[RMDB]
RNA sequence: GGGAACGACUCGAGUAGAGUCGAAAAGUAUCCCUAGAUGAUAAAACACCGCACAUGGCUCGUAAGAGCGGUUAAAUUAGCAAGUAAUGCAAAUUACGCGAGGUAACGCAUGGCCUAGGCUCGUUUGAAAAGGGAGAAUCCUUCGGGAUUCUCCCAAGCGUAAUAGAAUCUUCGGAUUCUAUUACGCAAAAGAAACAACAACAACAAC
Reactivity to 2A3 in 0.01 (KOAc 150mM, MgCl2 10mM, bicine 150mM(pH8.5), 24C), signal-to-noise 1, nucleotides 027 to 156: g000u010a080u100c000c000c010u000a040g100a170u140g020a030u070a040a170a020a000c030a020c010c000g030c000a050c070a180u110g020g000c050u020c080g000u090a070a090g010a020g040c010g000g000u000u050a010a070a070u090u070a030g020c040a080a020g050u100a110a040u050g080c060a000a020a250u140u070a090c040g000c050g000a020g000g080u080a100a010c020g010c030a050u070g000g050c030c000u050a020g030g000c000u020c150g000u060u030u140g180a110a150a090a060g000g000g000a000g000a000a000u020c000c000u000u030c060g020g000g010a000u000u000c020u000c000c000c000a020a010
Reactivity to DMS in 0.01 (KOAc 150mM, MgCl2 10mM, bicine 150mM(pH8.5), 24C), signal-to-noise 1, nucleotides 027 to 156: g030u000a070u000c020c010c000u000a210g000a130u000g010a080u000a070a090a050a160c030a060c010c010g000c070a150c050a160u010g020g000c030u000c020g000u010a080a180g010a100g000c000g020g030u000u000a050a160a220u000u010a150g010c080a050a130g050u000a060a010u010g010c090a070a150a100u000u000a040c030g010c020g010a130g010g010u010a040a100c040g050c090a010u000g010g040c050c000u000a090g040g000c030u010c030g000u000u000u020g000a070a120a100a190g010g050g000a080g000a020a000u010c000c010u000u010c300g080g010g020a010u000u000c000u010c000c010c000a010a000

The data come from the RNA Mapping Database (RMDB), library M2RFPK. The record gives the reactivity of an RNA of 207 nucleotides to 2A3 and DMS. DMS adducts were read by reverse transcription with MarathonRT. The DMS profile rests on 1,831 reads. Conditions: 150 mM KOAc, 10 mM MgCl2 and 150 mM bicine (pH 8.5), 24 C. For 2A3, 686 sequencing reads were counted.